RNA sequence: GGGAACGACUCGAGUAGAGUCGAAAAUGGCAACGUCAAGUGGCCCGGAUGCACCAGAAAUGACGGCCCGCAGACCGGUGGGGCCGGCCAGCACGACACCGGUGUCGCCGUUGUAGACGCGAAGGCCCUUGGAAUCCACUUUCGAGUGGAUUCCAAGAAAAGAAACAACAACAACAAC
Reactivity to 2A3 in 0.01 (KOAc 150mM, MgCl2 10mM, bicine 150mM(pH8.5), 24C), signal-to-noise 2, nucleotides 027 to 126: u070g030g010c010a090a040c070g010u070c050a030a120g030u050g040g000c000c000c000g000g000a060u050g030c090a060c030c020a050g160a040a140a020u110g060a020c010g000g000c000c010c020g010c020a120g090a190c050c110g020g060u090g010g050g010g010c000c000g000g020c000c000a080g010c070a010c080g090a020c010a000c000c010g030g000u050g110u030c050g030c000c000g000u000u050g020u040a060g000a070c020g000c020g120a180a010g100g000c020c000
Reactivity to DMS in 0.01 (KOAc 150mM, MgCl2 10mM, bicine 150mM(pH8.5), 24C), signal-to-noise 2, nucleotides 027 to 126: u020g000g010c050a070a070c100g010u030c030a090a090g040u010g020g000c000c010c080g050g040a080u000g000c080a150c050c060a130g000a050a100a120u030g000a110c010g000g000c010c030c020g000c100a100g010a070c030c090g040g050u000g010g020g000g010c010c030g000g020c110c030a090g010c050a070c060g000a080c020a040c010c020g000g010u010g000u000c010g000c000c000g040u000u000g010u020a100g020a090c050g000c070g050a140a060g000g010c000c010
The record gives the reactivity of an RNA of 177 nucleotides to 2A3 and DMS. The data come from the RNA Mapping Database (RMDB), library OK1LIB.